[RMDB]
Chemical mapping of a 177-nucleotide RNA with 2A3 and DMS. For 2A3, 2,076 sequencing reads were counted. Conditions: 150 mM KOAc, 10 mM MgCl2 and 150 mM bicine (pH 8.5), 24 C. It was measured as part of the RMDB library OK1LIB.
RNA sequence: GGGAACGACUCGAGUAGAGUCGAAAAGAAAGAAAGAAAUCAUGGGGGUGGUUUCCCCAUGCUAUUCUUGUGAUAGCAAGUAAGUUCUCAUGAGAUCUGAUGGUUUUAUAAGGGACUUCCCCCUUAACUAAUUAUUUUACUUCGGUAAAAUAAUUAGAAAAGAAACAACAACAACAAC
Reactivity to 2A3 in 0.01 (KOAc 150mM, MgCl2 10mM, bicine 150mM(pH8.5), 24C), signal-to-noise 3, nucleotides 027 to 126: g050a000a040a000g070a010a090a020g020a010a100a020u080c040a030u010g000g000g000g010g030u070g100g030u030u070u100c000c000c000c000a000u010g000c000u020a060u030u030c010u060u090g040u040g020a050u060a010g010c040a050a080g060u230a110a040g020u100u020c010u000c010a010u040g000a010g010a040u010c050u130g050a060u140g040g110u050u010u030u070a150u070a070a060g020g000g050a060c040u050u040c000c000c000c020c000u030u010a020a010
Reactivity to DMS in 0.01 (KOAc 150mM, MgCl2 10mM, bicine 150mM(pH8.5), 24C), signal-to-noise 3, nucleotides 027 to 126: g000a100a070a070g010a130a100a050g010a040a060a150u000c020a010u010g010g020g000g000g020u010g000g010u000u010u030c010c020c010c010a080u010g010c040u010a010u000u010c020u070u010g010u030g010a020u010a010g000c030a060a100g010u030a060a150g010u040u000c010u010c040a050u000g000a020g000a120u000c010u020g010a080u020g010g000u010u010u000u010a080u000a040a090g000g020g000a090c090u010u000c040c030c010c050c020u010u000a020a180